[RMDB]
RNA sequence: GGGAACGACUCGAGUAGAGUCGAAAAGAUAUGGAUCCAAGAGCAAGAUGUUCGGAAACGAAAACAUUGAUGACCUCUGGAUCCUAAGUCAAAGAGCGCUAGUCCAGUUCGCUGGACUAGCGCUCAAGGUAAGGCUAUUGUUCGCAAUAGCCUUACCAAAAGAAACAACAACAACAAC
Reactivity to DMS in 0.01 (KOAc 150mM, MgCl2 10mM, bicine 150mM(pH8.5), 24C), signal-to-noise 2, nucleotides 027 to 126: g000a040u010a300u020g000g010a020u000c010c000a000a080g030a030g000c040a090a170g030a000u000g000u000u000c010g000g000a140a040a200c000g010a060a130a110a040c000a030u000u010g010a160u010g000a110c300c000u020c010u000g010g000a000u030c000c000u000a020a040g020u010c020a050a080a140g010a010g000c000g010c010u010a010g000u000c000c020a010g000u000u010c090g000c000u000g000g000a000c000u010a000g000c000g020c010u000c010a010a010
Reactivity to 2A3 in 0.01 (KOAc 150mM, MgCl2 10mM, bicine 150mM(pH8.5), 24C), signal-to-noise 1, nucleotides 027 to 126: g050a000u080a040u140g000g000a000u010c020c050a200a130g020a040g080c000a020a260g000a000u020g040u070u030c080g070g000a100a070a060c040g060a080a080a100a100c010a000u000u090g100a110u230g040a300c010c030u000c010u000g020g000a020u000c000c000u000a030a000g040u030c030a110a180a060g020a000g000c030g010c000u010a000g010u000c000c000a010g000u090u080c190g120c180u000g000g000a030c010u000a010g000c040g000c000u000c000a000a000
This 177-nucleotide RNA was probed chemically with DMS and 2A3. 2A3 adducts were read by reverse transcription with SuperScript II with manganese. The 2A3 profile rests on 1,748 reads. The reactions ran in a buffer of 150 mM KOAc, 10 mM MgCl2 and 150 mM bicine (pH 8.5), at 24 C. Source: RMDB library TTRDEL, as collected in RNAgym.